The record gives the reactivity of an RNA of 177 nucleotides to DMS and 2A3. Reactivities are given for positions 27 through 126. It was measured as part of the RMDB library M2PK50. The reactions ran in a buffer of 150 mM KOAc, 10 mM MgCl2 and 150 mM bicine (pH 8.5), at 24 C. Reactivities are rounded to 0.1 and cut off at 0 and 3. For 2A3, 2,407 sequencing reads were counted. For 2A3 the reverse transcriptase was SuperScript II with manganese.
RNA sequence: GGGAACGACUCGAGUAGAGUCGAAAAAAGUGAUUAUUCGUAAUCACUUCACGCCGGGCGCGCUGGCGCGUGCCUGUAGUCCCAGCUACUCGGGAGGCUAAACGACGUACCCGUUCGCGGGUACGAAAUAGCUUCAUCUUUUCGAAGAUGAAGCUAUAAAAGAAACAACAACAACAAC
Reactivity to DMS in 0.01 (KOAc 150mM, MgCl2 10mM, bicine 150mM(pH8.5), 24C), signal-to-noise 3, nucleotides 027 to 126: a030a000g010u000g000a010u010u000a020u000u020c180g010u000a010a000u000c000a000c000u000u000c100a160c110g010c100c000g000g000g020c010g020c000g010c030u010g020g000c300g010c020g030u000g000c000c000u000g010u000a050g010u000c010c000c020a170g010c030u000a030c040u010c050g020g000g010a120g000g010c060u010a040a100a120c110g000a180c020g010u000a000c000c000c000g020u000u010c130g010c020g000g000g010u000a000c000g000a010a080
Reactivity to 2A3 in 0.01 (KOAc 150mM, MgCl2 10mM, bicine 150mM(pH8.5), 24C), signal-to-noise 2, nucleotides 027 to 126: a010a000g010u000g020a000u010u030a010u060u090c150g020u080a010a010u010c000a010c000u030u050c060a070c050g080c040c050g030g030g000c000g010c010g000c010u090g200g080c160g020c000g050u000g000c010c000u000g020u030a010g020u000c030c030c010a020g020c040u070a080c010u010c060g080g020g020a050g010g070c040u090a100a120a040c040g110a020c000g010u000a000c000c000c000g000u010u050c210g010c010g050g020g010u000a000c000g010a000a000